This 207-nucleotide RNA was probed chemically with 2A3. As a SHAPE reagent, 2A3 marks flexible, mostly unpaired nucleotides at the ribose 2'-OH. It was measured as part of the RMDB library M2RFPK. For 2A3, 1,181 sequencing reads were counted.
RNA sequence: GGGAACGACUCGAGUAGAGUCGAAAAACGGAUGGUACGCCAUCCGACCAUUGGGUAGAAGCGUUCAAUCAGCACCGGGACGGUGCAGAUGGGAAAUUGCCCAUGAUACGCACCAUACGUGGUGCGAAAAAGCCAUCGGUGUUCGCACCGAUGGCAAGUAUGCAUGCUGGUUCGCCAGCAUGCAUACAAAAGAAACAACAACAACAAC
Reactivity to 2A3 in 0.01 (KOAc 150mM, MgCl2 10mM, bicine 150mM(pH8.5), 24C), signal-to-noise 2, nucleotides 027 to 156: a000c010g000g000a000u000g000g060u040a030c300g080c020c000a000u030c000c000g000a000c000c000a060u070u130g010g000g000u020a100g020a170a010g050c020g080u070u040c040a030a030u000c010a010g000c000a000c000c010g090g100g090a110c110g060g000u010g000c060a020g000a020u030g030g010g010a030a090a050u030u010g000c000c020c000a000u070g020a010u030a010c030g000c010a000c000c000a010u020a120c210g140u050g020g000u030g000c000g010a040a010a000a010a000g000c000c000a000u000c000g000g010u010g040u100u060c300g000c090a000c000c000g020a000u000g000g000c000a000a000